Chemical mapping of a 177-nucleotide RNA with 2A3 and DMS.
RNA sequence: GGGAACGACUCGAGUAGAGUCGAAAAAUGUUUGAGGAGCACUAGGCUGUUGUCUAGACUAAGCAAGCUCUGGAAAGCAAUGCUGAGUCUCUGAGAAGAGGGAGCAUGGGGUGUGCUGAUUUAAAAAACCUUUUUUCUUAUUCGUAAGAAAAAAGGUAAAAGAAACAACAACAACAAC
Reactivity to 2A3 in 0.01 (KOAc 150mM, MgCl2 10mM, bicine 150mM(pH8.5), 24C), signal-to-noise 6, nucleotides 027 to 126: a000u080g080u060u030u070g020a030g010g020a010g010c030a030c060u010a020g040g000c020u030g060u300u140g010u060c010u010a010g010a060c050u050a070a010g050c050a060a030g000c030u020c030u040g070g050a090a040a000g020c030a040a100u100g010c010u030g020a030g050u010c020u000c010u090g070a050g020a110a020g020a050g030g020g010a030g020c030a040u070g020g000g000g050u070g020u020g010c020u030g040a150u100u190u300a050a090a000a000a000
Reactivity to DMS in 0.01 (KOAc 150mM, MgCl2 10mM, bicine 150mM(pH8.5), 24C), signal-to-noise 9, nucleotides 027 to 126: a100u010g000u010u010u010g010a260g000g000a040g020c030a150c030u000a090g010g010c020u010g020u010u020g010u000c020u010a020g000a090c080u010a070a050g010c110a070a180g010c020u010c050u010g000g010a100a110a050g010c020a070a100u020g010c010u000g000a070g010u010c010u000c090u010g010a160g000a100a070g010a080g010g000g000a060g000c040a070u010g000g000g000g020u010g010u000g010c050u000g000a100u010u020u020a000a030a060a070a060
For 2A3 the reverse transcriptase was SuperScript II with manganese.
DMS adducts were read by reverse transcription with MarathonRT.